Source: RMDB library OK3TST, as collected in RNAgym. The record gives the reactivity of an RNA of 207 nucleotides to DMS and 2A3. Values cover nucleotides 27 to 156. For DMS the reverse transcriptase was MarathonRT. 2A3 adducts were read by reverse transcription with SuperScript II with manganese.
RNA sequence: GGGAACGACUCGAGUAGAGUCGAAAAUAUAGAUUCGCAUAAAGGAUACGUUGUAUCUAGACGUGGAGAUCUAGAAACACUUGGAUAUUGUAUGAUUAGAUGGUUGGGAGGUAUCUUGCCAUGGACUAAGAUAUCUGAAACAAAGAAUUGUGCAUUAGGUUAGUAGAAGUUUCGACUUCUACUAACCAAAAGAAACAACAACAACAAC
Reactivity to DMS in 0.01 (KOAc 150mM, MgCl2 10mM, bicine 150mM(pH8.5), 24C), signal-to-noise 3, nucleotides 027 to 156: u000a170u000a090g010a070u000u000c010g020c020a120u000a070a220a300g000g010a060u000a040c050g020u000u010g040u010a030u000c020u010a030g000a300c130g000u010g000g010a160g000a020u010c000u010a030g010a140a090a050c060a050c110u000u000g020g030a070u000a050u010u000g010u000a060u020g010a080u000u000a090g020a110u010g010g020u000u000g010g010g000a030g000g030u000a010u000c010u000u000g000c070c000a140u000g040g010a070c050u000a030a050g010a020u000a010u000c020u000g010a150a050a050c060a070a060a200g000a040a080u010u000g000u000g020c080a120u020u000a170
Reactivity to 2A3 in 0.01 (KOAc 150mM, MgCl2 10mM, bicine 150mM(pH8.5), 24C), signal-to-noise 4, nucleotides 027 to 156: u220a000u030a030g070a120u120u090c060g000c060a020u150a090a090a040g030g020a020u040a090c060g060u080u140g030u070a070u000c010u010a000g000a060c030g060u120g080g060a100g010a030u000c000u020a010g050a020a100a010c060a010c050u060u040g020g010a020u040a040u080u090g040u050a080u080g060a070u030u080a100g020a090u030g040g100u090u090g030g050g000a020g020g010u020a010u030c000u010u020g020c030c010a060u050g050g020a040c040u070a030a010g010a030u010a000u000c010u070g070a060a040a030c070a010a080a050g050a110a030u060u050g020u020g020c050a030u040u180a040